[RMDB]
RNA sequence: GGGAACGACUCGAGUAGAGUCGAAAAAUCUUAAUCCACAUAUAGGCUAUGAUAAUGCUGCAAAAAUUGCUAAAGAAGCACAUAAGUAUGGGAUCACUUUAAAAGAAGCAGCUAAAAAACUCAAUUACUUCGCCCGGUCGUUCGCGAUCGGGCGGGGAAAAGAAACAACAACAACAAC
Reactivity to 2A3 in 0.01 (KOAc 150mM, MgCl2 10mM, bicine 150mM(pH8.5), 24C), signal-to-noise 3, nucleotides 027 to 126: a000u000c010u010u040a060a020u040c000c010a090c020a050u090a030u070a130g160g000c030u020a010u090g030a030u080a150a050u090g000c000u000g000c000a040a030a020a020a260u120u060g000c010u050a080a100a100g120a070a030g050c050a040c000a120u100a130a040g080u070a040u050g000g000g050a040u050c010a020c070u090u170u110a050a170a030a000g010a070a030g160c010a000g040c030u250a050a070a000a110a010a000c060u050c080a070a090u110u070a100
Reactivity to DMS in 0.01 (KOAc 150mM, MgCl2 10mM, bicine 150mM(pH8.5), 24C), signal-to-noise 3, nucleotides 027 to 126: a070u000c020u000u000a080a060u010c010c000a110c050a070u010a080u000a140g000g000c070u000a020u000g010a060u010a080a060u000g040c030u010g020c090a050a060a070a120a120u000u000g010c030u000a040a090a150g010a070a060g000c020a050c170a070u010a090a100g020u010a040u010g000g010g010a040u000c120a060c100u000u000u000a020a070a040a100g010a080a110g020c070a040g010c040u030a000a040a070a040a070a090c110u020c060a030a090u010u000a050
Structure probing data (2A3 and DMS) for a 177-nucleotide construct.
It was measured as part of the RMDB library OK2TST.
Conditions: 150 mM KOAc, 10 mM MgCl2 and 150 mM bicine (pH 8.5), 24 C.